[RMDB]
Background: Chemical mapping of a 207-nucleotide RNA with DMS and 2A3.
RNA sequence: GGGAACGACUCGAGUAGAGUCGAAAAGCUCUGGAAUUGAGGCCCGUCUAACAAUAAUCCAAAACUACUUCGCAGAGUAAUCUGCCGAAUCGUAGGAUGCCCAUUACUAUCUAUUUUUGGAGCAUCUAAAACUGUCAGUGCUUCGGCACUGACAGAACUCAUUCUGAAAGUUCGCUUUCAGAAUGAGAAAAGAAACAACAACAACAAC
Reactivity to DMS in 0.01 (KOAc 150mM, MgCl2 10mM, bicine 150mM(pH8.5), 24C), signal-to-noise 2, nucleotides 027 to 156: g040c020u010c020u010g020g010a120a080u000u000g000a180g020g000c000c060c050g060u010c040u000a100a090c080a070a120u010a050a100u010c010c030a060a130a080a240c020u000a040c070u010u000c000g020c000a010g010a050g010u000a200a150u010c010u000g000c010c040g030a040a040u010c090g000u000a100g040g000a050u000g020c030c000c030a080u000u000a070c100u000a110u020c120u010a120u000u000u000u000u000g040g000a190g000c010a030u000c010u010a040a000a100a120c000u000g000u000c000a000g010u010g000c010u000u020c300g040g010c010a020c000u010g000a020c000a000g010a070a110
Reactivity to 2A3 in 0.01 (KOAc 150mM, MgCl2 10mM, bicine 150mM(pH8.5), 24C), signal-to-noise 6, nucleotides 027 to 156: g010c000u010c000u010g040g080a110a050u160u030g010a010g020g030c000c000c040g060u080c090u180a140a090c060a070a120u180a060a030u060c040c020a020a030a050a140c010u030a020c010u020u010c000g000c010a010g000a010g040u120a120a130u020c000u020g050c100c050g010a010a020u080c060g010u020a030g040g030a000u010g000c010c000c000a010u050u030a080c080u080a080u190c040u090a250u120u080u010u010u030g030g010a140g000c000a000u000c010u070a020a030a040a110c000u000g000u000c000a000g010u000g020c010u020u080c150g050g010c000a000c000u000g000a000c000a000g000a000a000
For 2A3 the reverse transcriptase was SuperScript II with manganese.